[RMDB]
Description
Chemical mapping of a 207-nucleotide RNA with DMS and 2A3. The 2A3 profile rests on 1,453 reads.
RNA sequence: GGGAACGACUCGAGUAGAGUCGAAAAGGGCUGUAGUGCGCUAUGCCGAUCGGGUGUCCGCACUAAGUUCGGCAUCAAUAUGGUGACCUCCCGGGAGCGGGGGACCACCAGGUUGCCUAAGGAGGGGUGAACCGGCCCAGGUCGGAAACGGAGCAGGGAGACUAAAUUGGUUCGCCAAUUUAGUCUCAAAAGAAACAACAACAACAAC
Reactivity to DMS in 0.01 (KOAc 150mM, MgCl2 10mM, bicine 150mM(pH8.5), 24C), signal-to-noise 1, nucleotides 027 to 156: g010g020g020c000u000g030u000a060g010u000g010c050g030c070u020a070u000g040c000c000g010a120u000c070g030g070g010u000g000u000c240c100g000c020a010c000u000a000a170g000u000u010c140g040g050c020a060u010c030a080a140u000a050u000g000g030u000g020a070c040c000u000c000c000c020g030g080g020a240g000c050g010g000g000g020g010a030c020c000a040c030c010a020g010g010u000u000g000c010c050u010a140a080g000g010a230g010g020g080g000u010g010a070a080c020c070g040g000c000c030c030a040g040g020u000c020g000g010a040a080a150c030g000g010a140g020c040a090g020g020
Reactivity to 2A3 in 0.01 (KOAc 150mM, MgCl2 10mM, bicine 150mM(pH8.5), 24C), signal-to-noise 2, nucleotides 027 to 156: g050g010g030c090u070g030u170a030g010u040g070c010g010c090u120a080u120g020c020c000g110a210u070c110g030g010g010u030g020u030c050c060g060c030a000c020u080a030a110g070u040u040c020g000g000c000a020u030c020a070a210u090a060u180g000g020u010g010a060c020c010u080c000c020c040g000g110g060a130g030c090g010g010g030g020g010a050c090c010a000c000c000a010g000g010u020u010g030c020c010u030a050a020g030g030a070g000g060g030g020u050g010a040a010c030c010g030g000c000c020c020a030g010g070u020c000g000g000a000a090a050c100g010g030a030g060c010a050g030g070